[RMDB]
RNA sequence: GGGAACGACUCGAGUAGAGUCGAAAACUUAACGCCACACAACCCACAAUUAUUGUGUCGUAGCGGCUCCACAAUAUCCGGAUAUCCAGAACGUGAAUUUGAACUACGUCAGACCGGCCCAGCGCGCGUUAGGGAUACUAUUCGUAGUAUCCCUAACAAAAGAAACAACAACAACAAC
Reactivity to 2A3 in 0.01 (KOAc 150mM, MgCl2 10mM, bicine 150mM(pH8.5), 24C), signal-to-noise 9, nucleotides 027 to 126: c010u070u060a070a020c030g020c020c000a030c000a010c010a060a120c020c040c010a050c050a090a150u240u130a100u120u110g030u020g030u050c050g030u020a030g030c030g050g000c010u030c020c010a060c020a060a070u050a060u100c010c020g030g020a030u040a040u110c030c020a040g060a120a030c030g040u060g080a110a140u110u100u170g030a050a020c040u060a030c070g030u030c010a010g030a070c010c000g030g000c000c000c010a050g010c040g000c000g000c000
Reactivity to DMS in 0.01 (KOAc 150mM, MgCl2 10mM, bicine 150mM(pH8.5), 24C), signal-to-noise 9, nucleotides 027 to 126: c090u010u030a080a070c080g010c030c020a050c040a060c110a090a100c050c040c020a090c130a070a080u030u020a080u010u000g020u010g000u010c060g010u000a080g020c050g000g000c030u010c040c030a050c060a080a070u030a060u010c020c030g000g000a090u010a070u020c050c060a090g010a070a040c050g010u000g010a050a110u010u030u030g010a100a090c110u020a030c040g010u010c030a100g010a090c040c010g010g000c020c020c010a020g010c030g010c030g010c140